[RMDB]
RNA sequence: GGGAACGACUCGAGUAGAGUCGAAAAACGCACGAGUUAAGCCAUUUCAAUGAGACGCUGAACUUAUUGGAGACGCUGACCCAAUGAUACGCCGCCUGCACCGGGUUAAAGUUUUACGCGUUGAACGGAUCCUCGUUCGUUUCGACGAACGAGGAUCAAAAGAAACAACAACAACAAC
Reactivity to DMS in 0.01 (KOAc 150mM, MgCl2 10mM, bicine 150mM(pH8.5), 24C), signal-to-noise 1, nucleotides 027 to 126: a040c060g030c090a140c150g010a050g010u000u000a130a160g020c000c130a180u000u000u020c030a050a030u000g000a060g000a090c120g060c270u000g010a060a050c060u000u000a020u030u000g000g000a050g000a130c190g000c040u020g000a050c030c010c020a040a040u000g000a050u010a060c050g020c020c090g000c040c010u010g040c050a030c160c040g010g030g020u010u010a050a110a140g000u000u010u000u030a090c180g090c000g020u020u000g010a070a050c170g040